Structure probing data (2A3) for a 177-nucleotide construct. It was measured as part of the RMDB library OK1LIB.
[RMDB]
RNA sequence: GGGAACGACUCGAGUAGAGUCGAAAACAAGAAUCGGAUAGUCCUAGAGAGGCUGAAAUUACUUAUAAACCAACCGCUAUCAGUGGUUCUAGCGAUGGAUCAGUAAUUCAAGGUUAUGUUCCAACGAGCUUUGCGGGUGAUUCGUCACCCGCAAAGCAAAAGAAACAACAACAACAAC
Reactivity to 2A3 in 0.01 (KOAc 150mM, MgCl2 10mM, bicine 150mM(pH8.5), 24C), signal-to-noise 1, nucleotides 027 to 126: c020a000a050g090a000a050u130c000g070g050a130u150a040g050u030c000c000u110a040g000a000g000a000g290g000c000u000g060a040a000a160u080u080a070c060u060u000a040u130a150a070a150c000c000a000a000c000c020g090c000u070a000u080c100a140g190u130g140g080u050u100c050u020a010g020c000g090a000u000g000g000a000u000c020a010g100u030a060a000u040u040c160a020a000g080g090u000u120a000u140g100u110u000c000c000a000a040c070g020a000
For 2A3, 396 sequencing reads were counted. 2A3 adducts were read by reverse transcription with SuperScript II with manganese.